The data come from the RNA Mapping Database (RMDB), library M2RFPK. Structure probing data (2A3 and DMS) for a 207-nucleotide construct. For 2A3 the reverse transcriptase was SuperScript II with manganese. Conditions: 150 mM KOAc, 10 mM MgCl2 and 150 mM bicine (pH 8.5), 24 C. 2A3 is a SHAPE reagent: it acylates the 2'-hydroxyl of flexible nucleotides of all four kinds. For DMS the reverse transcriptase was MarathonRT.
RNA sequence: GGGAACGACUCGAGUAGAGUCGAAAAGGCUGCGUAUCACUCUAGGGUACGUGAUAGUGCGAUAUAAGAAGCACUGGUACAUGCCGGCAGGGACAGUUAAGAGAUGGCCGCAGUCUCGUGUCCCUGCAAAAGGAGUUCUCGUUCGCGAGAACUCCAACCUUAUAAGCCAGUUCGCUGGCUUAUAAGGAAAAGAAACAACAACAACAAC
Reactivity to 2A3 in 0.01 (KOAc 150mM, MgCl2 10mM, bicine 150mM(pH8.5), 24C), signal-to-noise 5, nucleotides 027 to 156: g010g010c020u030g000c030g010u000a010u040c030a060c200u120c160u190a130g120g000g000u020a010c020g010u030g020a040u080a060g010u000g010c020g050a020u030a020u050a300a100g120a080a020g000c010a000c010u020g020g020u110a050c040a060u180g010c020c020g020g000c000a000g000g000g000a010c000a040g030u140u140a160a060g010a000g000a010u030g070g080c120c070g040c080a030g020u000c000u000c010g040u030g000u000c000c000c000u000g000c000a000a000a000a010g010g010a000g000u000u000c000u000c000g020u040u020c140g010c000g070a000g000a000a000c000u000c000c000a000a000
Reactivity to DMS in 0.01 (KOAc 150mM, MgCl2 10mM, bicine 150mM(pH8.5), 24C), signal-to-noise 3, nucleotides 027 to 156: g030g030c010u000g030c010g010u000a060u010c040a100c060u000c110u000a170g040g020g040u000a010c020g060u000g010a070u000a020g030u000g010c000g000a160u010a200u010a120a190g020a200a240g050c010a030c000u010g020g000u000a060c070a120u000g010c010c000g000g000c050a030g000g010g020a040c000a060g030u010u010a100a180g010a050g010a040u000g010g020c090c120g020c070a200g000u000c000u010c000g000u000g000u000c000c020c000u010g000c020a010a020a100a090g010g000a020g000u010u000c000u000c000g030u000u000c200g030c030g000a050g000a040a010c010u000c000c010a000a030